[RMDB]
RNA sequence: GGGAACGACUCGAGUAGAGUCGAAAAUUAUCAUCACAGCAUCAUUUUCAUGAUCCAACAUCACAAUUAUUCUCAUAGGAAUAAACAUAAUAAUUACAGCCCUCUACUCUCUCUACAUACUAAUUACUACACAACGAGGAAAAUACACCCACCACAUCUGUAUAGAAGACUUCGGUCUUCUAUACAGAAAAGAAACAACAACAACAAC
Reactivity to 2A3 in 0.01 (KOAc 150mM, MgCl2 10mM, bicine 150mM(pH8.5), 24C), signal-to-noise 2, nucleotides 027 to 156: u060u040a030u080c030a030u060c010a010c030a160g070c050a060u030c000a030u050u070u130u080c070a070u080g050a010u050c020c020a050a030c010a090u080c010a040c040a080a200u050u010a030u060u010c030u010c020a100u220a070g100g060a020a060u070a130a040a040c020a020u280a120a060u080a140a020u230u080a140c020a030g020c000c020c020u000c020u020a020c000u000c000u000c010u000c000u050a050c050a070u030a010c020u030a080a030u140u040a020c020u050a010c010a010c010a120a000c060g010a010g030g030a010a020a020a100u110a030c030a000c050c010c070a030c000c080a040c040a020u060